[RMDB]
RNA sequence: GGGAACGACUCGAGUAGAGUCGAAAAUUCGAGGAUCUCCUCCCUCUCCUUCGAGGACGGGUUCGCGACGGGUUGGCUCAUCCUGAGAUCGGGGAGCCUCGACGAUCUCUUUGAUCUCCUGAAGGAGGAAGGAGCUCUCGAGCGCUCUCCCGCCCCUCUGAUUUAGGUAGUUCGCUACCUAAAUCAGAAAAGAAACAACAACAACAAC
Reactivity to 2A3 in 0.01 (KOAc 150mM, MgCl2 10mM, bicine 150mM(pH8.5), 24C), signal-to-noise 4, nucleotides 027 to 156: u090u060c030g020a020g060g030a090u040c050u040c060c010u060c000c020c020u040c030u040c030c040u090u130c070g070a060g030g020a050c050g000g010g020u080u150c050g020c050g150a080c030g020g070g000u100u110g030g000c030u030c020a120u130c030c020u090g030a070g010a160u160c020g000g010g000g010a000g000c000c000u000c020g030a040c110g030a020u010c010u010c000u050u050u120g180a190u060c010u030c020c040u170g120a190a140g010g000a000g000g000a010a020g010g000a000g000c030u000c000u000c010g010a010g000c130g020c010u020c020u040c010c000c020g020c000c000c000c000u000